[RMDB]
RNA sequence: GGGAACGACUCGAGUAGAGUCGAAAACUAUGUACAGACAGUACAGUGGAUAAGGUCUGUGGAUAUCCAACUUGAACAAUGGUACUUGCAGUGGUAUCUAUCAAGAUAGGCAGGCUAUCAUAGAAAGAAGAUCUGUAUUAUUCGUAGUACGGAUCUUAAAAGAAACAACAACAACAAC
Reactivity to 2A3 in 0.01 (KOAc 150mM, MgCl2 10mM, bicine 150mM(pH8.5), 24C), signal-to-noise 9, nucleotides 027 to 126: c020u040a050u080g050u010a010c010a070g170a030c020a030g070u020a010c000a020g030u050g070g030a080u040a090a060g030g000u000c000u010g000u030g010g070a040u030a040u090c020c010a010a040c030u010u020g000a100a020c070a120a150u170g010g000u020a010c000u030u100g120c070a070g050u060g140g020u020a000u000c000u000a070u030c020a030a000g020a070u040a030g080g000c010a000g000g000c010u010a010u070c020a030u030a060g100a040a110a000g110
Reactivity to DMS in 0.01 (KOAc 150mM, MgCl2 10mM, bicine 150mM(pH8.5), 24C), signal-to-noise 9, nucleotides 027 to 126: c100u000a030u010g000u010a020c010a070g010a070c140a080g010u000a020c040a160g010u020g000g010a100u010a060a070g010g010u000c010u000g000u000g010g010a070u010a030u020c040c060a100a150c060u000u000g000a060a080c170a060a050u010g010g000u000a020c010u000u010g010c110a090g010u030g010g010u000a010u010c000u000a080u030c140a040a020g000a050u010a040g010g010c040a020g000g000c120u000a020u010c030a040u010a060g000a090a070a070g000